[RMDB]
RNA sequence: GGGAACGACUCGAGUAGAGUCGAAAAAUGGCUAGAGUGACUAGACCCGUAACAUUGCUAUGAAAUCAUUUGAACUGAAAUUUGUUGAUCUGCGGUUUAUUUUCAAGAGAUCAAAACGAAGAUAAGUGUAUACAGUGGCGUUCGCGCCACUGUAUACAAAAGAAACAACAACAACAAC
Reactivity to 2A3 in 0.01 (KOAc 150mM, MgCl2 10mM, bicine 150mM(pH8.5), 24C), signal-to-noise 1, nucleotides 027 to 126: a000u010g040g000c000u060a060g000a030g200u000g090a000c000u000a000g000a000c000c030c000g160u000a020a020c000a050u020u170g030c030u050a020u030g220a000a000a220u120c030a030u300u150u000g000a000a070c000u000g030a020a090a090u300u230u000g000u100u000g000a000u000c000u000g030c000g000g010u240u000u000a130u000u150u000u000c190a220a000g110a000g000a000u000c250a010a010a010a010c030g050a000a000g000a070u000a200a100g000u000
Chemical mapping of a 177-nucleotide RNA with 2A3. It was measured as part of the RMDB library RFM100.